[RMDB]
This 207-nucleotide RNA was probed chemically with 2A3 and DMS. The data come from the RNA Mapping Database (RMDB), library RFM130. The 2A3 profile rests on 3,424 reads. The RNA was probed in 150 mM KOAc, 10 mM MgCl2 and 150 mM bicine (pH 8.5) at 24 C. For DMS, 1,985 sequencing reads were counted. Values cover nucleotides 27 to 156. For 2A3 the reverse transcriptase was SuperScript II with manganese.
RNA sequence: GGGAACGACUCGAGUAGAGUCGAAAAAGCAGAAAAAUACCUUUCUCAAUGUAGGGAAUAACAUUGAAUUGAUACAAAUACCUUUUUCGGUGUAGGGAAAAACACCGAAUUGAUACAAAUACCUUUCUCAAUGUAGGGAAUAACAUUGAUAUAAAAACAACAGUGAAGUGUUCGCACUUCACUGUUGAAAAGAAACAACAACAACAAC
Reactivity to 2A3 in 0.01 (KOAc 150mM, MgCl2 10mM, bicine 150mM(pH8.5), 24C), signal-to-noise 4, nucleotides 027 to 156: a000g060c060a040g110a030a080a000a020a010u190a030c000c010u000u000u000c000u000c000a000a010u000g000u000a000g010g050g060a220a140u170a060a000c000a010u020u000g030a030a020u050u130g040a050u060a160c050a040a150a030u110a030c000c000u010u010u000u000u000c010g000g000u000g000u010a000g010g020g030a100a200a040a000a000c000a010c000c010g000a000a000u000u020g010a000u010a030c020a030a110a010u090a040c000c000u000u000u000c000u000c000a010a000u010g000u000a000g040g040g100a250a090u140a050a000c010a000u010u000g000a010u020a000u010a030a000a000a000a000
Reactivity to DMS in 0.01 (KOAc 150mM, MgCl2 10mM, bicine 150mM(pH8.5), 24C), signal-to-noise 1, nucleotides 027 to 156: a170g020c080a190g000a000a050a080a090a070u010a040c010c100u000u000u000c000u000c000a010a040u000g020u000a060g030g000g000a160a060u020a060a020c000a010u010u040g010a010a190u000u020g020a160u010a220c030a110a240a070u000a020c030c000u000u060u000u000u000c030g030g000u010g100u010a120g040g030g030a110a080a250a110a000c000a000c000c010g030a010a010u020u000g000a150u020a140c030a050a110a080u030a060c000c000u010u000u030c010u000c020a040a030u000g020u000a030g030g000g000a180a030u000a000a000c030a010u050u000g010a030u000a200u000a050a050a100a060a200